[RMDB]
RNA sequence: GGGAACGACUCGAGUAGAGUCGAAAAGCAUACGCGGAUCCAAAUUCUCGCGAUUUGCCGCAUCACUAAUCCUAUACACGUAUGUGCGGUCAAGCGCAGAAAAACGAGCAUCAAAACCGCUUGGUGCAUUAGCAGGGCACUUCGGUGCCCUGCUAAUAAAAGAAACAACAACAACAAC
Reactivity to 2A3 in 0.01 (KOAc 150mM, MgCl2 10mM, bicine 150mM(pH8.5), 24C), signal-to-noise 2, nucleotides 027 to 126: g000c020a020u090a160c150g000c000g010g030a020u020c060c110a060a090a050u070u000c000u110c140g080c030g040a150u070u060u060g000c000c000g000c000a050u240c000a060c130u130a050a010u160c010c030u150a100u160a190c210a000c100g100u190a080u140g020u000g000c000g000g010u050c010a010a010g040c000g000c000a020g070a030a040a000a040a040c040g030a000g000c000a000u050c030a000a000a040a120c000c000g000c000u000u000g000g010u000g020c000
Reactivity to DMS in 0.01 (KOAc 150mM, MgCl2 10mM, bicine 150mM(pH8.5), 24C), signal-to-noise 1, nucleotides 027 to 126: g000c150a130u000a000c190g010c000g000g000a210u040c040c120a190a050a160u000u000c000u030c280g000c040g000a140u000u050u000g050c000c000g010c000a000u000c240a290c200u040a010a100u080c170c050u000a140u000a060c120a020c110g000u010a120u100g030u000g000c000g000g000u000c150a000a040g000c000g050c000a000g000a000a000a050a140a050c140g000a100g020c000a030u000c000a000a000a120a100c130c090g000c000u000u000g000g040u000g000c000